[RMDB]
RNA sequence: GGGAACGACUCGAGUAGAGUCGAAAAGCAUUAAGAGAGUACUCUUAUUCCCACAACGUUGGUGACAACGUUGAUUUUCCGGUGGCCACCCGCCCGGGCCACCGUUACUCCACUCCACUCCUUCGGGACUGGUUUGGAGGAACACUUGAGGGCUAAACCUACGUACCUGGUUCGCCAGGUACGUAGGAAAAGAAACAACAACAACAAC
Reactivity to 2A3 in 0.01 (KOAc 150mM, MgCl2 10mM, bicine 150mM(pH8.5), 24C), signal-to-noise 1, nucleotides 027 to 156: g020c040a060u060u080a010a000g000a000g050a090g290u220a260c000u000c000u000u000a020u010u000c010c010c010a020c000a010a000c000g000u000u000g010g070u050g100a030c020a000a000c010g030u000u000g060a080u050u030u100u130c080c000g000g010u000g000g020c000c020a060c070c040c040g010c000c000c000g030g000g000c000c000a000c000c000g020u000u040a000c000u010c000c000a000c000u000c000c000a000c000u000c000c030u010u030c110g040g000g010a010c030u020g000g000u000u000u000g000g000a000g000g000a040a010c070a030c110u110u150g180a080g020g000g000c010u000a060a030a000
Structure probing data (2A3) for a 207-nucleotide construct. The 2A3 profile rests on 779 reads. The data come from the RNA Mapping Database (RMDB), library OK3TST. The reactions ran in a buffer of 150 mM KOAc, 10 mM MgCl2 and 150 mM bicine (pH 8.5), at 24 C.